[RMDB]
RNA sequence: GGGAACGACUCGAGUAGAGUCGAAAACACUACAAUGUCAGUGAGAACAAGAAAAACGACUCUUGUCGGACCUACUUGAUCAAAAGAGUGGGAAAACCCCGGAAUCACGUAGACCCACUUGGGACCGAGUAUUGCAAUUAUUGGUCGCGCAACGAGGGGUCUGUAGAUUGUUCGCAAUCUACAGACCAAAAGAAACAACAACAACAAC
Reactivity to DMS in 0.01 (KOAc 150mM, MgCl2 10mM, bicine 150mM(pH8.5), 24C), signal-to-noise 1, nucleotides 027 to 156: c040a060c040u000a090c010a120a180u010g040u000c100a160g020u010g000a180g020a100a100c040a040a100g000a100a060a140a100a170c070g000a070c090u000c030u000u000g000u010c040g040g000a220c030c040u000a010c000u000u030g000a110u000c050a090a140a130a150g010a040g030u030g020g020g040a060a040a090a090c000c030c030c040g000g020a150a090u010c100a050c100g050u000a070g000a300c000c000c010a030c080u020u030g000g040g040a040c000c000g000a120g040u000a050u020u010g000c040a010a060u000u000a110u000u000g000g000u000c010g040c130g030c010a040a050c080g000a050g000g030
Reactivity to 2A3 in 0.01 (KOAc 150mM, MgCl2 10mM, bicine 150mM(pH8.5), 24C), signal-to-noise 3, nucleotides 027 to 156: c000a010c030u100a030c110a130a140u200g050u120c040a010g020u040g070a050g030a100a050c110a190a070g110a090a120a000a010a000c050g070a060c000u010c010u090u080g040u070c010g010g030a020c010c000u000a010c010u060u070g030a050u050c040a050a000a130a080g020a000g010u060g000g010g000a050a060a030a050c040c010c010c010g090g070a100a130u100c050a030c080g020u040a020g050a060c000c000c000a020c000u030u040g040g040g020a020c020c020g020a040g060u040a050u090u220g030c080a090a050u070u030a070u100u090g040g000u000c020g000c030g010c170a040a060c030g050a030g010g080